RNA sequence: GGGAACGACUCGAGUAGAGUCGAAAACGAGGAGCUGGUGAAGCGCAAGAACGAAUUGGCCGAUGUAGCCGUCUUGCUCGGCAGAUACACCGCGGCCCUGACAGAGGCCGUCGGUUCCGGACCGUUCUAUCAGUAUCACCUUCGGGUGAUACUGAUAAAAAGAAACAACAACAACAAC
Reactivity to DMS in 0.01 (KOAc 150mM, MgCl2 10mM, bicine 150mM(pH8.5), 24C), signal-to-noise 4, nucleotides 027 to 126: c060g020a110g010g000a080g020c020u000g000g010u020g010a100a110g050c120g030c070a050a030g010a070a050c120g040a110a150u030u040g010g010c000c010g010a130u040g010u040a080g010c020c030g000u010c030u010u020g000c060u010c000g010g010c080a090g010a160u020a060c100a070c010c010g010c020g000g020c010c010c030u010g020a150c230a100g000a180g000g000c000c000g000u020c030g000g010u000u020c050c010g000g020a100c040c020g010u000u010c070
Reactivity to 2A3 in 0.01 (KOAc 150mM, MgCl2 10mM, bicine 150mM(pH8.5), 24C), signal-to-noise 5, nucleotides 027 to 126: c050g010a060g080g000a060g020c020u030g030g080u100g050a090a010g040c020g000c060a020a020g070a090a030c070g020a070a080u220u220g050g000c030c030g090a090u180g070u160a030g020c000c010g010u020c010u070u100g010c020u030c000g010g000c010a010g020a090u160a060c060a020c030c000g000c010g000g010c010c020c030u090g030a100c080a130g100a160g040g010c010c020g080u120c080g010g000u060u000c000c000g010g060a110c010c000g010u020u040c030
Chemical mapping of a 177-nucleotide RNA with DMS and 2A3. The RNA was probed in 150 mM KOAc, 10 mM MgCl2 and 150 mM bicine (pH 8.5) at 24 C. The 2A3 profile rests on 3,396 reads. Source: RMDB library OK1LIB, as collected in RNAgym.